[RMDB]
RNA sequence: GGGAACGACUCGAGUAGAGUCGAAAACAACUUUAUCAUCUACGACUCAUCAGAUCGUGGCCAGGAAAGUUUAGCUAGGUCUGCAUGUGUUUAUUAUUCUCAAGUCUUGUGUAAAUCAAUUCUUUUGUCAACGGUGUCUUCGGACACCGUAAAAGAAACAACAACAACAAC
Reactivity to DMS in 0.01 (KOAc 150mM, MgCl2 10mM, bicine 150mM(pH8.5), 24C), signal-to-noise 2, nucleotides 027 to 129: c060a010a090c100u000u000u010a080u020c120a130u000c060u030a140c080g040a080c090u010c050a110u030c030a020g000a000u010c010g080u060g020g020c060c100a060g030g000a120a140a070g080u000u000u000a060g020c070u030a280g020g070u000c000u080g020c080a070u030g010u000g020u040u020u000a120u050u040a140u000u000c080u050c150a080a050g010u090c060u050u000g050u010g040u090a000a080a190u090c090a090a070u010u000c030u000u000u090u020g070u040c170a070
Reactivity to 2A3 in 0.01 (KOAc 150mM, MgCl2 10mM, bicine 150mM(pH8.5), 24C), signal-to-noise 3, nucleotides 027 to 129: c010a000a000c000u120u120u030a150u060c100a070u080c100u160a070c060g030a010c010u000c000a090u000c010a000g000a020u020c070g170u230g000g010c010c000a080g130g000a150a180a040g090u150u230u180a010g000c000u000a000g000g040u000c000u000g050c060a000u030g000u000g000u000u060u000a010u010u010a060u110u050c080u000c040a010a060g110u060c050u080u100g020u040g010u030a020a070a040u190c030a020a130u020u020c000u010u030u020u000g120u070c110a020